Overview: This 207-nucleotide RNA was probed chemically with 2A3 and DMS.
RNA sequence: GGGAACGACUCGAGUAGAGUCGAAAACCAGAUGACGGUCCUGCCAUGAGACCGCAACGAGAGCAAGUCGCAUCGAAUGGACUCGGGGAGUCGGCAGCUUGCCCCACGGAUGAGCGCCUAAUGCCGGAAGAGACGUGCAACUUCGGUUGCACGUCAACAUGAAACGGAUGUUCGCAUCCGUUUCAUGAAAAGAAACAACAACAACAAC
Reactivity to 2A3 in 0.01 (KOAc 150mM, MgCl2 10mM, bicine 150mM(pH8.5), 24C), signal-to-noise 3, nucleotides 027 to 156: c010c010a000g070a150u100g050a070c020g000g000u010c010c010u050g100c010c010a120u120g050a040g020a120c000c000g010c060a040a080c070g090a030g010a010g120c030a080a010g050u090c040g020c030a060u030c040g080a060a060u100g030g010a020c010u010c070g000g030g010g020a050g110u070c030g010g010c000a030g010c020u080u130g050c000c040c020c000a030c060g020g020a090u130g010a030g030c030g060c030c000u090a140a010u100g030c050c000g040g000a030a050g070a050g000a050c000g020u010g000c000a000a000c000u030u070c150g110g000u000u000g000c000a010c000g000u000c000a000a000
Reactivity to DMS in 0.01 (KOAc 150mM, MgCl2 10mM, bicine 150mM(pH8.5), 24C), signal-to-noise 1, nucleotides 027 to 156: c030c000a170g010a110u000g030a120c030g000g010u000c010c010u000g030c000c190a100u010g000a020g010a020c000c010g050c060a030a170c110g010a130g000a130g040c050a060a050g000u000c020g000c020a070u000c000g050a080a300u000g030g020a050c000u000c050g000g030g030g050a140g020u010c020g000g020c030a070g030c080u010u010g000c010c010c010c040a090c050g020g020a060u000g030a060g000c030g060c070c050u030a110a060u030g030c010c000g010g000a120a170g010a160g010a010c000g050u010g000c000a000a030c010u010u010c290g060g010u000u000g000c010a030c010g030u020c000a020a050
Conditions: 150 mM KOAc, 10 mM MgCl2 and 150 mM bicine (pH 8.5), 24 C.